[RMDB]
Annotation
Structure probing data (2A3 and DMS) for a 177-nucleotide construct. For DMS the reverse transcriptase was MarathonRT. In probing experiments dimethyl sulfate is read out at A N1 and C N3, which are open when not base-paired. The 2A3 profile rests on 5,743 reads. For 2A3 the reverse transcriptase was SuperScript II with manganese. The RNA was probed in 150 mM KOAc, 10 mM MgCl2 and 150 mM bicine (pH 8.5) at 24 C.
RNA sequence: GGGAACGACUCGAGUAGAGUCGAAAACGAAUAGAAUUCGUUCUAUUCGAAUGACUGCUAAAACCAGAGUUGACUGCGCCGAGCAGAAACGGCAAAGGAAAAAGUAGCCCAGAUUCGUCUGGGCUAACCUACCUGUAUUGUUCGCAAUACAGGUAGGAAAAGAAACAACAACAACAAC
Reactivity to 2A3 in 0.01 (KOAc 150mM, MgCl2 10mM, bicine 150mM(pH8.5), 24C), signal-to-noise 4, nucleotides 027 to 126: c000g000a000a010u010a010g000a000a020u060u040c170g030u080u000c020u010a010u000u010c000g000a020a040u120g050a010c030u030g030c040u130a030a030a080a100c030c020a010g030a020g110u060u060g100a150c020u050g000c030g000c020c030g010a020g010c050a040g140a170a080a000c010g010g000c030a030a050a060g070g050a080a160a030a010a000g100u050a000g000c010c000c000a000g000a020u020u060c160g040u000c090u010g010g000g000c000u000a000a000
Reactivity to DMS in 0.01 (KOAc 150mM, MgCl2 10mM, bicine 150mM(pH8.5), 24C), signal-to-noise 5, nucleotides 027 to 126: c010g020a010a020u000a030g000a010a040u010u030c200g010u000u000c000u000a010u000u000c000g000a100a100u010g010a080c010u000g010c040u000a050a070a080a110c130c040a110g010a120g010u010u000g000a160c010u000g010c300g000c030c030g000a110g010c050a060g010a040a050a070c030g000g000c030a050a200a090g010g010a060a060a070a070a100g000u010a010g000c000c000c000a010g010a030u000u010c200g010u000c010u000g000g000g010c010u010a000a040